The record gives the reactivity of an RNA of 177 nucleotides to 2A3 and DMS. For DMS the reverse transcriptase was MarathonRT.

RNA sequence: GGGAACGACUCGAGUAGAGUCGAAAAACCUGGGGGUGACAUACACCGGAAAACCGUAGAGAUACGGUCCCCCUUGUGGUCGGUGUACAGGUGGUGCAUGGCUGUCGUCAGCUCGUGUCGUGAGAUGAGUAUUUUUGAAAUUCGUUUCAAAAAUACUAAAAGAAACAACAACAACAAC
Reactivity to 2A3 in 0.01 (KOAc 150mM, MgCl2 10mM, bicine 150mM(pH8.5), 24C), signal-to-noise 5, nucleotides 027 to 126: a000c000c000u000g010g000g000g000g000u050g010a010c000a020u070a000c010a020c000c000g020g010a060a070a010a010c000c000g000u000a000g010a000g000a070u010a010c000g010g000u050c000c000c000c000c010u050u210g180u150g020g010u040c020g000g010u020g010u010a040c030a020g050g060u080g020g040u050g050c040a050u070g040g000c020u020g030u090c010g030u030c020a010g000c000u010c000g020u030g000u010c010g010u030g050a090g020a080u130g000
Reactivity to DMS in 0.01 (KOAc 150mM, MgCl2 10mM, bicine 150mM(pH8.5), 24C), signal-to-noise 6, nucleotides 027 to 126: a040c020c000u010g010g010g000g000g010u020g000a100c130a220u010a050c030a010c010c010g010g010a120a090a160a030c000c000g020u000a000g000a190g020a220u000a000c000g000g010u010c020c020c000c000c040u020u020g010u020g020g010u010c010g000g000u000g010u000a040c120a080g010g020u010g000g000u010g010c090a080u010g010g010c020u010g010u020c060g020u010c060a130g010c000u000c000g010u000g000u000c020g010u010g000a110g000a080u020g000